[RMDB]
RNA sequence: GGGAACGACUCGAGUAGAGUCGAAAAUCAUCCAAUGAAAACGUGGUGAUGACGCGCACUUUCUCGAAGAUUCACGGCCUGCCCGGCCUGCGCAUCGGCUGGAUUUAUGCGCCGCUCCACAUCAUCAAGUGAUGAUUACGUUCGCGUAAUCAUCACUAAAAGAAACAACAACAACAAC
Reactivity to 2A3 in 0.01 (KOAc 150mM, MgCl2 10mM, bicine 150mM(pH8.5), 24C), signal-to-noise 3, nucleotides 027 to 126: u080c030a020u010c000c020a050a130u190g090a080a100a020a040c090g010u040g000g020u040g060a300u040g030a100c080g010c000g000c020a020c000u030u070u010c080u020c050g040a060a030g010a030u080u050c060a020c040g030g000c030c000u060g050c040c040c000g010g000c010c020u040g040c070g000c030a020u040c010g040g030c030u040g030g010a010u020u090u070a090u130g000c040g000c000c000g010c000u000c010c010a040c000a050u080c000a010u040c030a070
Reactivity to DMS in 0.01 (KOAc 150mM, MgCl2 10mM, bicine 150mM(pH8.5), 24C), signal-to-noise 4, nucleotides 027 to 126: u010c100a060u010c010c030a130a090u020g000a080a050a120a160c220g000u010g020g030u000g020a120u000g000a120c190g030c020g030c060a040c180u010u000u020c020u000c060g010a140a090g000a060u010u010c070a050c110g000g010c010c020u000g000c200c190c090g000g000c010c010u030g020c030g000c090a030u000c030g000g020c040u000g000g000a050u000u000u000a070u010g010c040g020c010c030g000c040u000c030c020a060c060a060u000c040a050u000c140a110
This 177-nucleotide RNA was probed chemically with 2A3 and DMS. DMS adducts were read by reverse transcription with MarathonRT. Reactivities are given for positions 27 through 126. The data come from the RNA Mapping Database (RMDB), library OK2TST. For DMS, 2,825 sequencing reads were counted.